[RMDB]
RNA sequence: GGGAACGACUCGAGUAGAGUCGAAAAUAGUGCCAUUAUAAACAUAUGUGUGCAUGUGUCUUUAUAGCAGCAUGAUUUAUAAUCUUCUUUUUUUUUUGAGACACAGUCUCGCUCUGUCGCCGGGCUGGAGUGCAGUGGCAGCAUCUCGGCUCACUGAACUCCGUGCCUGAUUCGUCAGGCACGGAGUAAAAGAAACAACAACAACAAC
Reactivity to 2A3 in 0.01 (KOAc 150mM, MgCl2 10mM, bicine 150mM(pH8.5), 24C), signal-to-noise 1, nucleotides 027 to 156: u130a010g000u040g030c010c000a120u130u080a030u060a010a180a030c040a040u150a030u140g160u010g050u090g070c030a050u110g010u010g030u100c030u040u200u190a100u030a080g010c040a030g030c020a010u030g040a020u140u160u060a130u090a140a190u100c020u190u150c090u200u050u070u000u060u030u020u020u080u110g120a140g000a000c190a000c020a030g010u020c000u020c000g030c010u000c010u020g170u140c160g000c090c000g000g010g040c030u010g090g080a030g030u070g000c030a030g000u020g000g050c030a020g000c000a060u050c030u030c060g100g000c020u030c010a000c040u110g010a080